[RMDB]
Chemical mapping of a 177-nucleotide RNA with DMS and 2A3.
RNA sequence: GGGAACGACUCGAGUAGAGUCGAAAACCCGUAGGGGAGAAUAGAACACCGGGGGGUGAUCCACCAGGAGAAGGAGCGGAGAACCCACCUCCAGAGGACCCCUUCAGCGAACAGAAGGGCUCCUCCUGACAUAAGAUAGGUUCGCCUAUCUUAUGUCAAAAGAAACAACAACAACAAC
Reactivity to DMS in 0.01 (KOAc 150mM, MgCl2 10mM, bicine 150mM(pH8.5), 24C), signal-to-noise 1, nucleotides 027 to 126: c000c000c020g030u020a100g010g000g000g030a110g020a120a120u020a080g000a100a070c090a060c080c100g000g000g020g000g040g010u000g000a190u000c020c020a120c020c040a130g000g020a140g010a100a070g010g000a050g040c060g010g000a120g010a130a080c010c040c000a100c090c000u000c070c150a190g000a010g010g000a020c280c000c000c000u000u010c000a080g000c040g010a030a030c060a130g000a030a010g010g000g040c270u000c000c000u000c010c140u000
Reactivity to 2A3 in 0.01 (KOAc 150mM, MgCl2 10mM, bicine 150mM(pH8.5), 24C), signal-to-noise 2, nucleotides 027 to 126: c010c000c030g020u130a110g030g050g040g030a080g030a120a110u160a140g080a120a030c020a060c080c030g050g000g000g000g030g020u010g020a020u020c010c000a020c000c000a090g080g080a150g160a240a070g090g020a070g200c110g000g040a040g010a100a030c000c000c020a070c000c010u030c020c020a010g000a010g010g010a000c000c010c000c000u010u010c000a010g020c000g100a050a030c020a130g010a010a000g000g010g000c020u000c000c010u030c020c050u030
In probing experiments dimethyl sulfate is read out at A N1 and C N3, which are open when not base-paired. 2A3 adducts were read by reverse transcription with SuperScript II with manganese.